RNA sequence: GGGAACGACUCGAGUAGAGUCGAAAAUGUCAUCCAGGCUGGAGAGCAAUGGCACAAUCCUGGCUCACUGCAGCCUCUGCCUCCUGGGAUCAGGAGAUUCUCCCACUUCAGUCUCCCUGGUAGCUGGACUUUCUCUUUGGUUCGCCAAAGAGAAAGUAAAAGAAACAACAACAACAAC
Reactivity to DMS in 0.01 (KOAc 150mM, MgCl2 10mM, bicine 150mM(pH8.5), 24C), signal-to-noise 4, nucleotides 027 to 126: u000g000u000c070a040u000c110c120a060g020g010c070u010g010g000a070g010a080g030c060a080a030u010g000g010c090a070c210a100a090u010c060c030u000g010g010c020u000c040a080c100u000g010c060a040g010c040c030u000c070u000g010c070c020u000c010c010u000g000g000g010a070u010c030a030g020g010a050g010a090u010u000c090u000c020c020c020a130c090u000u010c040a020g010u000c030u010c030c010c000u010g010g010u000a070g010c040u010g010g010
Reactivity to 2A3 in 0.01 (KOAc 150mM, MgCl2 10mM, bicine 150mM(pH8.5), 24C), signal-to-noise 2, nucleotides 027 to 126: u050g010u020c020a020u020c040c040a000g000g060c020u030g040g060a070g000a020g040c020a050a130u060g050g000c020a030c050a160a080u100c020c010u020g040g000c000u010c020a110c090u140g050c040a010g020c000c000u030c030u070g020c010c010u010c000c000u040g030g110g070a210u170c020a020g010g040a050g000a020u060u040c040u020c000c020c000a040c010u050u020c000a050g020u020c010u020c040c030c000u040g000g060u030a030g030c050u050g020g040
Chemical mapping of a 177-nucleotide RNA with DMS and 2A3. For DMS the reverse transcriptase was MarathonRT. DMS (dimethyl sulfate) methylates the pairing face of unpaired adenines and cytosines. It was measured as part of the RMDB library OK2TRN. The RNA was probed in 150 mM KOAc, 10 mM MgCl2 and 150 mM bicine (pH 8.5) at 24 C.